This 177-nucleotide RNA was probed chemically with 2A3 and DMS. The reactions ran in a buffer of 150 mM KOAc, 10 mM MgCl2 and 150 mM bicine (pH 8.5), at 24 C. DMS adducts were read by reverse transcription with MarathonRT.
RNA sequence: GGGAACGACUCGAGUAGAGUCGAAAAGAAGAGAGCGUAGCACACACUCAGACUGUACGACAGUCUGACACACACCUACGCUAGUGCAUCGUGUGAGUGAUAUCGAUGUUGCACGAAGAUGAGGAAAACCCGACUAACUUUUCGAAGUUAGUCGGGUAAAAGAAACAACAACAACAAC
Reactivity to 2A3 in 0.01 (KOAc 150mM, MgCl2 10mM, bicine 150mM(pH8.5), 24C), signal-to-noise 1, nucleotides 027 to 126: g140a000a050g160a010g030a000g000c020g000u000a000g030c290a040c010a000c000a000c040u000c000a000g010a000c010u050g020u130a110c130g160a060c270a000g020u000c030u030g000a000c000a010c000a000c000a000c040c030u020a010c000g000c010u040a010g000u000g000c030a000u010c030g000u080g050u080g090a070g010u100g030a050u060a040u210c020g030a030u040g020u040u030g010c020a000c000g050a030a030g070a130u170g020a200g000g000a000a000a030
Reactivity to DMS in 0.01 (KOAc 150mM, MgCl2 10mM, bicine 150mM(pH8.5), 24C), signal-to-noise 2, nucleotides 027 to 126: g010a070a130g000a130g000a040g030c000g010u000a010g040c110a130c110a130c090a070c160u010c000a000g000a000c010u000g000u000a280c300g030a100c000a000g000u000c000u000g000a010c070a040c060a140c100a070c300c000u020a000c000g000c000u010a060g030u000g010c000a000u020c000g010u000g010u010g020a010g000u000g000a070u010a200u000c000g000a010u000g000u000u000g000c020a010c010g010a120a080g000a070u000g010a100g000g030a110a100a090